[RMDB]
RNA sequence: GGGAACGACUCGAGUAGAGUCGAAAAGCCUCGUUUCGACGAGGCAAAAACCGUAGGUCCGUCGGAGGUCUUGGAUUUAUAUGGUACUUCGAAAGAGGUACCUAAGUUGUCAGACUUAAGACGGACCUAAACGGAAAAAGUGCCCUUCGGGGCACAACUUAAGGGCACUAUUCGUAGUGCCCUUAAGAAAAGAAACAACAACAACAAC
Reactivity to DMS in 0.01 (KOAc 150mM, MgCl2 10mM, bicine 150mM(pH8.5), 24C), signal-to-noise 1, nucleotides 027 to 156: g000c000c000u000c000g000u010u000u000c260g010a050c000g030a040g030g110c010a020a010a030a060a060c010c010g010u000a040g020g010u000c000c000g010u000c000g000g030a290g000g000u000c010u000u010g060g010a040u000u000u000a100u000a250u030g040g010u000a020c000u000u010c000g040a140a070a280g020a020g000g010u000a010c000c000u000a000a000g020u000u000g020u000c040a050g010a100c030u000u000a200a230g010a050c020g030g030a000c020c000u010a000a020a050c020g000g000a110a050a050a110a110g020u010g000c000c000c030u010u020c300g090g010g000g000c000a010c000a010a130
Source information: The record gives the reactivity of an RNA of 207 nucleotides to DMS. DMS adducts were read by reverse transcription with MarathonRT. The RNA was probed in 150 mM KOAc, 10 mM MgCl2 and 150 mM bicine (pH 8.5) at 24 C. Source: RMDB library RNAMAK, as collected in RNAgym.